[RMDB]
RNA sequence: GGGAACGACUCGAGUAGAGUCGAAAAGAUAUGGAUCUCUCCGAGAUUAGUUAUAUCGGAAACGAUAUAAGAUCGAUGAGGAGGAGAUCCUAAGUCAAAGUGCGACACGGUUCGCCGUGUCGCACAACGAAUCUAACAACUUCGGUUGUUAGAUUCGAAAAGAAACAACAACAACAAC
Reactivity to DMS in 0.01 (KOAc 150mM, MgCl2 10mM, bicine 150mM(pH8.5), 24C), signal-to-noise 3, nucleotides 027 to 126: g000a020u000a260u000g000g000a010u000c000u000c000u000c000c010g010a090g000a040u000u000a080g000u000u000a000u000a000u000c010g000g000a080a040a150c000g010a010u000a010u010a020a040g010a030u000c020g000a130u020g010a290g000g000a050g010g000a030g010a010u000c000c000u000a010a050g010u000c030a110a100a110g000u000g000c000g010a010c000a010c010g010g000u000u020c230g010c000c000g030u000g000u000c000g020c000a010c000a000a090
Reactivity to 2A3 in 0.01 (KOAc 150mM, MgCl2 10mM, bicine 150mM(pH8.5), 24C), signal-to-noise 3, nucleotides 027 to 126: g020a030u030a040u110g000g000a010u020c000u000c000u000c000c000g160a170g030a230u090u150a040g200u040u000a010u000a010u010c000g000g070a040a020a010c010g000a010u000a000u010a020a020g100a120u130c100g240a300u200g060a090g010g060a050g140g060a050g000a000u020c000c000u000a070a000g000u000c030a170a070a080g000u010g010c010g000a000c020a010c040g000g150u100u170c270g040c150c000g010u000g000u000c000g020c010a010c010a000a000
The record gives the reactivity of an RNA of 177 nucleotides to DMS and 2A3. Values cover nucleotides 27 to 126. The data come from the RNA Mapping Database (RMDB), library TTRDEL. The RNA was probed in 150 mM KOAc, 10 mM MgCl2 and 150 mM bicine (pH 8.5) at 24 C. Reactivities are rounded to 0.1 and cut off at 0 and 3.